Chemical mapping of a 207-nucleotide RNA with 2A3 and DMS.
For DMS, 5,929 sequencing reads were counted.
The data come from the RNA Mapping Database (RMDB), library M2RFPK.
The reactions ran in a buffer of 150 mM KOAc, 10 mM MgCl2 and 150 mM bicine (pH 8.5), at 24 C.

RNA sequence: GGGAACGACUCGAGUAGAGUCGAAAACGUUGUCAUCGACAACACCCUAUGCAUUCAUGCUCUGUAAGGAUGCGCCGAAAGGUGAGCAAGCCCGAGUUGCCCAGACCUGAAAUGCACCACUUUAGAGAAAACCCGAAGCAGUUCGCUGCUUCGGGAACGUUACGUAAAUGUUCGCAUUUACGUAACGAAAAGAAACAACAACAACAAC
Reactivity to 2A3 in 0.01 (KOAc 150mM, MgCl2 10mM, bicine 150mM(pH8.5), 24C), signal-to-noise 5, nucleotides 027 to 156: c090g010u010u000g010u010c110a280u140c300g020a010c000a010a000c000a060c000c000c010u060a070u070g000c010a000u000u010c030a050u170g020c020u000c010u030g030u040a020a020g010g000a020u020g000c000g000c010c000g080a110a070a020g020g010u030g020a020g000c020a010a020g010c010c020c000g090a060g050u080u100g050c020c000c000a010g020a080c010c010u030g030a060a070a040u060g030c020a020c010c020a050c040u100u120u150a090g020a000g000a100a110a040a050c010c000c000g000a000a000g000c000a000g020u050u130c190g050c120u000g000c000u000u000c000g010g000g000a000a000
Reactivity to DMS in 0.01 (KOAc 150mM, MgCl2 10mM, bicine 150mM(pH8.5), 24C), signal-to-noise 3, nucleotides 027 to 156: c120g010u000u000g020u000c060a220u000c100g010a060c010a030a050c030a130c000c000c000u010a080u010g010c020a050u000u000c040a200u000g000c000u000c020u000g020u000a300a140g000g020a030u000g010c000g030c040c040g000a120a110a130g010g040u000g010a090g010c040a090a130g020c040c010c020g020a120g030u000u000g000c000c020c030a170g010a050c030c010u000g010a060a060a090u000g010c020a050c030c000a070c040u000u000u000a090g010a160g000a070a060a070a110c020c000c000g020a010a000g030c000a040g020u010u010c300g030c020u010g010c000u010u000c000g020g020g000a000a000